[RMDB]
RNA sequence: GGGAACGACUCGAGUAGAGUCGAAAACAAGGGGGUUUAGAAUUUAUUGAACAAUUGUUACAGAUAGAAGCUCAGAAAGGUAAUUGUCAAUCUGGUUUUAAGAUAAAGUUUAAUGUGGUAGCAGUUACGUGGUAAUACAUUUCGAUGUAUUACCACGAAAAGAAACAACAACAACAAC
Reactivity to 2A3 in 0.01 (KOAc 150mM, MgCl2 10mM, bicine 150mM(pH8.5), 24C), signal-to-noise 1, nucleotides 027 to 126: c020a070a070g020g020g000g000g020u020u030u040a000g030a000a020u070u100u060a150u150u200g020a020a000c010a020a000u110u060g000u090u080a020c000a000g020a030u110a030g100a090a000g030c030u040c180a020g020a130a070a000g060g000u030a110a110u090u040g010u060c000a010a070u000c000u020g000g060u050u060u040u080a080a000g000a060u080a090a130a050g030u090u090u080a080a030u150g020u040g070g020u000a000g000c040a010g000u040u040a030
Reactivity to DMS in 0.01 (KOAc 150mM, MgCl2 10mM, bicine 150mM(pH8.5), 24C), signal-to-noise 3, nucleotides 027 to 126: c070a100a120g020g020g000g020g010u010u010u010a070g010a110a060u010u010u000a060u030u010g010a070a070c060a080a030u000u010g000u000u000a060c050a080g000a080u010a090g010a090a100g010c080u010c030a040g010a040a070a120g000g010u000a050a110u010u010g000u000c030a030a120u000c060u000g020g000u000u030u000u000a070a070g000a070u010a040a040a070g010u000u010u000a060a070u000g010u000g010g010u000a050g020c050a090g020u000u010a110